RNA sequence: GGGAACGACUCGAGUAGAGUCGAAAAGAUUUAACACUAGUAAGAAAGCAGUGCAAGAAGAUCUAGAAUUCUCUGACUAUAAAUUCUUCAAUGCUUCAGACAGUGUUAGACUGUCUAUUAGAUCAUUAUUUAAAUAUUGCUCAACCAUGAUGAUUGAAGCAUAGAAUAGAUUCGUCUAUUCUAUGCUAAAAGAAACAACAACAACAAC
Reactivity to 2A3 in 0.01 (KOAc 150mM, MgCl2 10mM, bicine 150mM(pH8.5), 24C), signal-to-noise 5, nucleotides 027 to 156: g020a010u050u050u030a010a000c010a010c030u090a070g040u060a110a060g020a180a060a010g020c010a000g000u050g050c070a020a010g000a020a010g010a030u060c030u060a020g060a160a240u300u060c140u050c050u150g070a040c010u030a010u070a210a160a090u040u000c000u010u000c010a050a060u020g000c000u010u020c000a010g050a050c010a000g000u010g010u020u010a020g020a010c000u030g050u050c040u060a110u110u140a070g030a040u040c000a000u090u150a060u110u170u230a110a130a110u230a110u170u180g030c040u020c090a020a070c080c040a040u070g010a010u040g020a010u070u050g070a060
Reactivity to DMS in 0.01 (KOAc 150mM, MgCl2 10mM, bicine 150mM(pH8.5), 24C), signal-to-noise 3, nucleotides 027 to 156: g000a090u000u000u000a030a020c020a040c030u000a140g060u000a170a180g010a190a080a070g040c000a030g000u000g000c100a020a040g000a070a080g000a130u000c100u000a080g020a140a180u010u000c100u010c060u000g010a220c060u000a160u000a040a060a200u000u010c020u010u000c020a030a050u000g010c000u000u020c020a210g000a070c020a010g020u000g020u010u000a070g000a070c010u000g010u000c030u000a050u000u020a090g000a030u000c020a050u000u000a170u010u000u000a090a030a200u000a080u000u000g020c010u010c070a060a070c050c030a110u000g010a090u000g020a150u000u010g010a140

This 207-nucleotide RNA was probed chemically with 2A3 and DMS.
For DMS the reverse transcriptase was MarathonRT.
2A3 adducts were read by reverse transcription with SuperScript II with manganese.
The reactions ran in a buffer of 150 mM KOAc, 10 mM MgCl2 and 150 mM bicine (pH 8.5), at 24 C.
Values are in units of 0.01, from 0 to 300, in steps of 10.
2A3 is a SHAPE reagent: it acylates the 2'-hydroxyl of flexible nucleotides of all four kinds.
For DMS, 3,944 sequencing reads were counted.